[RMDB]
RNA sequence: GGGAACGACUCGAGUAGAGUCGAAAAACACCAAAACUGAAAACGGAAGGCAAUCCUUCCACGACGAAACUUACUUUCCUUUGAUCGUCGUUACUACUGGCAUAGCCACAAAGGAGAACAAACAUGAGCGCGGACACUGACUUCGGUCAGUGUCCAAUCAUCUAGGUAGGUUCGCCUACCUAGAUGAAAAAGAAACAACAACAACAAC
Reactivity to 2A3 in 0.01 (KOAc 150mM, MgCl2 10mM, bicine 150mM(pH8.5), 24C), signal-to-noise 7, nucleotides 027 to 156: a000c100a110c010c060a080a070a040a060c160u210g080a080a070a040a030c080g010g000a010a000g030g000c150a070a160u260c010c000u010u010c010c000a000c000g000a000c000g010a070a070a030c040u090u100a060c010u090u190u040c020c000u050u020u050g040a050u060c000g010u000c010g000u030u060a030c060u040a030c030u020g030g000c070a270u120a140g020c020c010a030c030a030a040a000g030g020a040g020a070a040c050a080a080a040c080a120u200g080a040g120c130g000c090g030g000a000c000a000c000u000g000a000c000u040u060c190g000g000u000c010a000g000u000g010u000c000c000a000a000
Reactivity to DMS in 0.01 (KOAc 150mM, MgCl2 10mM, bicine 150mM(pH8.5), 24C), signal-to-noise 2, nucleotides 027 to 156: a090c080a180c040c050a040a120a070a240c120u000g020a080a080a060a100c060g030g010a060a000g110g040c100a120a140u000c020c010u000u000c000c020a030c000g010a050c020g010a030a040a070c050u000u000a030c100u010u000u000c020c010u000u000u000g000a090u010c030g020u000c030g020u010u000a070c050u000a110c040u000g000g010c070a110u000a110g020c020c040a070c030a040a030a050g000g000a060g020a120a190c050a070a090a080c070a110u010g020a110g020c070g000c100g020g020a020c000a000c000u020g020a010c020u000u000c300g010g030u000c000a000g000u000g020u000c000c000a020a050
This 207-nucleotide RNA was probed chemically with 2A3 and DMS.
For 2A3, 6,869 sequencing reads were counted.
For DMS, 4,074 sequencing reads were counted.
For DMS the reverse transcriptase was MarathonRT.